Structure probing data (DMS and 2A3) for a 177-nucleotide construct.
[RMDB]
RNA sequence: GGGAACGACUCGAGUAGAGUCGAAAACAAUCUCGUCAUCUAGGUCGUGUCGGCGGUGCCGACGGUGGGCGAGGUAAUCCGCGGGGUAGUUCGUUGUAUGCGUUACGCCGCGAGAGCCGGCGGCGACCUGUGCGCUAUUAUUCGUAAUAGCGCACAGAAAAGAAACAACAACAACAAC
Reactivity to DMS in 0.01 (KOAc 150mM, MgCl2 10mM, bicine 150mM(pH8.5), 24C), signal-to-noise 1, nucleotides 027 to 126: c200a130a100u010c050u000c000g000u040c050a050u020c070u020a070g020g000u000c020g040u000g000u000c000g030g020c000g040g020u010g000c000c000g000a060c110g020g000u000g010g030g010c020g030a130g010g030u030a060a040u030c050c010g000c000g000g020g000g000u000a020g000u040u010c080g000u000u000g040u030a100u030g000c100g010u020u000a040c010g000c000c020g000c000g000a060g010a170g010c050c030g000g000c060g010g000c020g010a070c120
Reactivity to 2A3 in 0.01 (KOAc 150mM, MgCl2 10mM, bicine 150mM(pH8.5), 24C), signal-to-noise 3, nucleotides 027 to 126: c030a030a140u040c020u030c020g110u060c040a140u000c080u070a070g060g050u050c000g070u030g040u080c020g060g070c030g030g260u170g020c030c010g030a050c080g010g010u160g030g020g000c030g000a030g000g000u030a060a100u020c010c020g010c010g030g040g000g000u010a020g110u060u070c010g050u030u020g200u130a130u230g060c000g010u010u010a100c160g010c020c000g000c020g010a070g000a000g060c050c010g000g010c030g100g000c000g000a000c000
For DMS, 3,736 sequencing reads were counted.
Reactivities are rounded to 0.1 and cut off at 0 and 3.
It was measured as part of the RMDB library OK1LIB.